[RMDB]
RNA sequence: GGGAACGACUCGAGUAGAGUCGAAAAGCGCUAUGCCGAUCGGGUGUCCACACUAAGUUCGGCAUCAAUAUGGUGACCUCCCGGGAGCGGGGGACCACCGGAUUGCCUAAGGAGGGGUGAACCGGCCCAGGUCAGAAAAAGAGCAGGUCAAAACUCCGCUAAUAUCAGUCUUCGGACUGAUAUUAGCAAAAGAAACAACAACAACAAC
Reactivity to 2A3 in 0.01 (KOAc 150mM, MgCl2 10mM, bicine 150mM(pH8.5), 24C), signal-to-noise 1, nucleotides 027 to 156: g050c010g020c140u060a010u030g000c000c000g010a010u020c080g000g100g020u040g080u150c120c100a250c010a030c050u150a300a080g030u020u000c000g000g000c000a000u000c000a010a030u090a070u180g000g000u050g020a010c000c000u010c020c000c000g030g050g050a050g070c010g000g020g020g050g020a050c000c000a000c000c000g030g030a010u030u050g040c020c000u030a050a070g080g010a050g050g030g000g000u020g030a020a030c000c000g010g030c040c080c010a010g010g020u010c050a030g070a160a140a020a030a000g050a000g060c120a020g000g090u010c010a010a010a000a140c020u030c020c020

Structure probing data (2A3) for a 207-nucleotide construct.
The reactions ran in a buffer of 150 mM KOAc, 10 mM MgCl2 and 150 mM bicine (pH 8.5), at 24 C.